[RMDB]
RNA sequence: GGGAACGACUCGAGUAGAGUCGAAAAUGCUGGAAAGGGAUUGUAGAGAUCAGUGUCGCAGCAUUCUCAAUUAGAUUGUAUAUGGUUACGUGCGACAGAUACUGGUGAGGCCGGGCUUCUCGAAGAAGGGUAUAUAUAUCUUCGGAUAUAUAUACCCAAAAGAAACAACAACAACAAC
Reactivity to DMS in 0.01 (KOAc 150mM, MgCl2 10mM, bicine 150mM(pH8.5), 24C), signal-to-noise 8, nucleotides 027 to 126: u020g000c020u010g000g000a060a050a060g020g010g010a060u010u000g010u020a100g010a140g000a030u020c030a040g010u020g020u010c010g010c020a040g010c030a040u010u010c070u010c040a070a090u030u040a080g010a270u010u020g000u010a050u030a060u010g010g010u000u010a070c110g010u010g000c020g000a020c030a060g000a090u020a070c040u000g000g010u000g000a070g000g010c040c040g000g010g000c050u010u000c010u010c040g010a050a090g000a100a130
Reactivity to 2A3 in 0.01 (KOAc 150mM, MgCl2 10mM, bicine 150mM(pH8.5), 24C), signal-to-noise 4, nucleotides 027 to 126: u070g000c000u010g040g030a070a120a110g170g030g060a090u030u120g070u130a050g020a020g000a090u060c010a020g020u030g040u120c010g000c060a000g020c000a000u060u000c040u000c030a000a160u190u110a070g160a250u070u070g080u090a100u010a030u220g150g020u180u100a060c070g040u100g040c010g000a010c010a010g080a010u110a060c010u010g020g020u030g040a080g020g000c020c010g010g000g010c060u030u000c050u040c030g050a080a050g020a070a020